[RMDB]
RNA sequence: GGGAACGACUCGAGUAGAGUCGAAAAGCCAUUUUAUUGGUGUUGAGGGUGAACUACCUGUAGCUGUAGUCAAUGAUAAGAUCUUCACCAAGAGUGGCGUUAAUGACAUUUGUAUGUUUGAGAAUAAGACGAGUAAUAGGUUCGCCUAUUACUCGUCAAAAGAAACAACAACAACAAC
Reactivity to DMS in 0.01 (KOAc 150mM, MgCl2 10mM, bicine 150mM(pH8.5), 24C), signal-to-noise 3, nucleotides 027 to 126: g020c000c010a010u000u000u000u010a130u000u010g010g010u010g020u020u000g000a050g000g020g010u020g010a090a040c030u010a040c000c060u010g040u000a080g020c230u020g010u000a030g020u000c040a130a090u000g000a150u000a080a170g010a180u000c010u000u000c010a010c000c000a010a010g000a010g030u000g000g010c000g000u010u000a040a080u010g010a090c080a090u000u000u010g010u000a040u000g010u000u000u000g000a130g010a100a060u020a060a150
Reactivity to 2A3 in 0.01 (KOAc 150mM, MgCl2 10mM, bicine 150mM(pH8.5), 24C), signal-to-noise 2, nucleotides 027 to 126: g000c000c000a000u030u020u030u130a180u020u010g010g000u040g000u010u020g000a040g020g080g000u070g000a080a030c010u020a020c000c020u110g170u140a060g050c180u070g010u000a000g000u010c030a070a080u160g160a090u000a120a010g040a070u030c010u000u000c010a000c000c000a000a020g010a000g010u020g000g010c010g000u010u070a030a110u120g110a000c050a080u100u150u130g200u120a240u010g040u000u070u110g110a160g040a050a070u130a300a000
Record summary: Structure probing data (DMS and 2A3) for a 177-nucleotide construct. Source: RMDB library 15KREP, as collected in RNAgym. The reactions ran in a buffer of 150 mM KOAc, 10 mM MgCl2 and 150 mM bicine (pH 8.5), at 24 C.